An RNA of 177 nucleotides, treated with 2A3 and DMS and read out base by base. It was measured as part of the RMDB library M2PK90.

[RMDB]
RNA sequence: GGGAACGACUCGAGUAGAGUCGAAAAGAAAAUAAGCGAAGAUAGCUCAGUCGCUAGAGCAGCAGGACCGAAACCUGCAUCGAAAGGGAUCAAGACCCUGUUCGCGCAAAAACCGAAGUUAAAAAAACUGAUAACUAGUGUUCGCACUAGUUAUCAGAAAAGAAACAACAACAACAAC
Reactivity to 2A3 in 0.01 (KOAc 150mM, MgCl2 10mM, bicine 150mM(pH8.5), 24C), signal-to-noise 1, nucleotides 027 to 126: g060a010a070a010a070u210a160a000g000c000g060a030a000g100a170u110a040g000c020u000c040a010g130u060c030g000c090u060a030g000a010g090c010a010g000c000a010g040g000a150c140c130g060a050a010a010c040c000u030g000c020a010u060c000g040a080a050a000g040g020g010a010u090c060a120a000g150a250c010c000c000u000g090u030u050c010g000c000g000c030a090a090a080a000a000c030c020g080a060a020g070u170u190a000a060a080a000a040a000a010
Reactivity to DMS in 0.01 (KOAc 150mM, MgCl2 10mM, bicine 150mM(pH8.5), 24C), signal-to-noise 2, nucleotides 027 to 126: g010a170a040a100a080u010a150a120g020c010g030a070a080g030a070u000a090g000c000u000c030a160g020u000c070g010c050u020a070g000a060g000c020a160g030c020a000g000g000a110c040c230g010a090a100a080c020c000u010g000c040a070u010c090g000a040a080a000g020g010g000a150u000c250a090a200g010a160c000c010c000u000g000u010u000c020g020c070g000c080a010a050a070a100a110c110c040g000a040a050g000u000u000a000a000a140a050a030a060a080

Source information:
For DMS, 1,266 sequencing reads were counted. The RNA was probed in 150 mM KOAc, 10 mM MgCl2 and 150 mM bicine (pH 8.5) at 24 C.